[RMDB]
RNA sequence: GGGAACGACUCGAGUAGAGUCGAAAACCGAGGGGGGAGCUAGGAGCGUAGGGGGGCCAGCGGAGCCAUGGGAUGCUCCUCCCGAUUCCGUCCAUCCCUCCCCCCAAGAGGGUCGCCCAGGAAUGGCCAAUGAACAUACCUUCGGGUAUGUUCAUUGAAAAGAAACAACAACAACAAC
Reactivity to DMS in 0.01 (KOAc 150mM, MgCl2 10mM, bicine 150mM(pH8.5), 24C), signal-to-noise 2, nucleotides 027 to 126: c000c000g010a200g020g000g000g000g000g020a030g060c140u000a180g000g030a060g010c150g000u000a130g010g000g020g010g000g020c250c190a030g030c050g010g000a160g020c020c000a040u030g000g000g000a150u000g000c010u000c000c000u000c000c010c000g000a100u000u030c080c030g000u000c070c070a050u000c050c160c010u000c000c010c030c010c010c010a040a050g000a070g030g000g000u010c070g010c000c010c020a110g000g000a080a040u000g000g000c100